[RMDB]
RNA sequence: GGGAACGACUCGAGUAGAGUCGAAAAAAAAGAUAUGGAUGUCACAGAGAAAUUAUAACCGACGAAGCUCAUCGGAAACGAUGAGCAGAGGUUAGAAUUUCGACGAAGUGACAUCCUAAGUCAAAAACCAUAUCGGAUAGUUCGCUAUCCGAUAUGGAAAAGAAACAACAACAACAAC
Reactivity to 2A3 in 0.01 (KOAc 150mM, MgCl2 10mM, bicine 150mM(pH8.5), 24C), signal-to-noise 2, nucleotides 027 to 126: a000a000a000a010g140a040u120a080u160g000g000a010u030g000u010c000a000c000a020g120a020g030a050a020a000u040u030a020u040a030a010c000c010g150a240c070g030a300a030g000c000u010c010a000u000c010g000g000a050a050a080c000g000a010u030g010a000g060c000a000g010a000g000g010u000u000a000g000a000a000u040u030u020c090g260a230c030g070a150a100g000u000g000a000c000a000u030c010c000u000a000a010g010u010c030a000a000a000a080a150
Reactivity to DMS in 0.01 (KOAc 150mM, MgCl2 10mM, bicine 150mM(pH8.5), 24C), signal-to-noise 2, nucleotides 027 to 126: a120a060a060a040g000a030u020a300u000g000g000a000u000g010u000c000a000c010a110g010a230g000a000a010a010u010u000a090u000a000a000c020c000g010a140c300g000a110a100g000c000u000c010a030u000c000g000g000a170a080a150c010g000a020u000g000a020g040c000a030g010a080g010g030u000u000a010g000a020a020u000u000u000c000g000a150c280g010a090a060g000u000g000a020c000a000u000c000c000u000a000a060g010u020c040a060a060a090a100a120
Annotation
An RNA of 177 nucleotides, treated with 2A3 and DMS and read out base by base. The reactions ran in a buffer of 150 mM KOAc, 10 mM MgCl2 and 150 mM bicine (pH 8.5), at 24 C. 2A3 adducts were read by reverse transcription with SuperScript II with manganese. The data come from the RNA Mapping Database (RMDB), library TTRDES. DMS adducts were read by reverse transcription with MarathonRT.